[RMDB]
RNA sequence: GGGAACGACUCGAGUAGAGUCGAAAAUGAGAAUACUUUUAGUACAAGCGAGUACACGCAGUAUAGUGCCACUUGUGUGAGAAUACUUUUAGUACAAGCGAGUACACGCAGUAUACUGCCACUUGUGGCUGGUAGCAGGGUUCGCCCUGCUACCAGCAAAAGAAACAACAACAACAAC
Reactivity to 2A3 in 0.01 (KOAc 150mM, MgCl2 10mM, bicine 150mM(pH8.5), 24C), signal-to-noise 2, nucleotides 027 to 126: u300g000a100g130a060a100u060a170c030u050u110u100u210a040g010u080a040c070a140a040g040c000g020a010g020u160a040c090a010c110g000c000a000g030u000a000u040a000g250u040g000c010c000a020c020u030u010g040u060g030u060g060a070g130a070a010u070a020c020u020u090u190u300a010g000u030a000c040a070a020g000c020g020a010g040u170a040c000a020c060g000c010a000g070u040a000u000a000c010u000g040c000c000a030c000u000u020g010u000g040
Reactivity to DMS in 0.01 (KOAc 150mM, MgCl2 10mM, bicine 150mM(pH8.5), 24C), signal-to-noise 1, nucleotides 027 to 126: u000g000a150g000a280a230u000a000c060u020u000u000u010a090g050u000a090c220a070a170g000c070g010a240g200u000a130c080a030c300g010c080a000g000u000a000u000a050g000u000g010c000c160a050c000u000u000g000u000g000u080g000a010g010a070a070u000a070c090u000u000u000u000a070g000u060a070c000a000a160g000c070g050a150g030u020a030c060a010c150g000c060a010g000u000a090u000a060c000u000g000c060c120a050c010u000u000g000u000g000